Background
The record gives the reactivity of an RNA of 207 nucleotides to 2A3 and DMS. The reactions ran in a buffer of 150 mM KOAc, 10 mM MgCl2 and 150 mM bicine (pH 8.5), at 24 C. The data come from the RNA Mapping Database (RMDB), library OK3TST. The 2A3 profile rests on 1,602 reads. For DMS the reverse transcriptase was MarathonRT.

RNA sequence: GGGAACGACUCGAGUAGAGUCGAAAAAACUCAAUUCCAAGCUUUGGGUCAAAGCCCUAGGAAAGAAAACUGGAUCUAAGGGAUCCAGAGGUAGACAACAACAGAGGUUAAAAGGCACAGCACAGGUGAUCGUGGCUGAUUCCUGCCAAUUAAGCCAAUCGGUAAUAUACUUCGGUAUAUUACCGAUAAAAGAAACAACAACAACAAC
Reactivity to 2A3 in 0.01 (KOAc 150mM, MgCl2 10mM, bicine 150mM(pH8.5), 24C), signal-to-noise 3, nucleotides 027 to 156: a010a010c060u070c080a050a070u060u000c020c010a060a000g000c060u080u090u120g010g000g020u140c070a110a040a090g020c020c000c030u060a090g000g030a100a030a030g040a040a090a020a010c000u000g000g010a000u030c050u130a130a260g120g140g000a000u000c000c000a000g000a000g000g000u020a000g020a050c030a070a000c010a020a010c020a130g080a010g100g000u020u040a020a060a020a070g010g030c010a000c000a020g040c030a010c050a060g000g120u110g070a110u170c060g020u050g030g000c020u010g000a050u090u080c010c010u030g020c000c020a020a040u130u050a050a010g010c020c000a000
Reactivity to DMS in 0.01 (KOAc 150mM, MgCl2 10mM, bicine 150mM(pH8.5), 24C), signal-to-noise 2, nucleotides 027 to 156: a060a020c010u000c030a030a200u000u000c040c010a050a170g020c030u000u000u000g000g000g000u000c080a140a090a110g000c030c000c000u000a060g000g000a160a090a100g000a100a050a100a170c000u000g010g010a010u000c000u010a180a140g050g060g000a000u010c000c010a010g070a000g080g010u000a110g050a080c060a060a080c090a030a030c050a030g010a120g000g030u010u000a020a030a090a050g000g020c010a050c010a030g030c170a040c040a050g040g010u000g000a070u000c050g000u000g020g000c110u000g010a140u000u000c060c040u000g010c000c030a020a070u010u000a030a150g020c000c000a070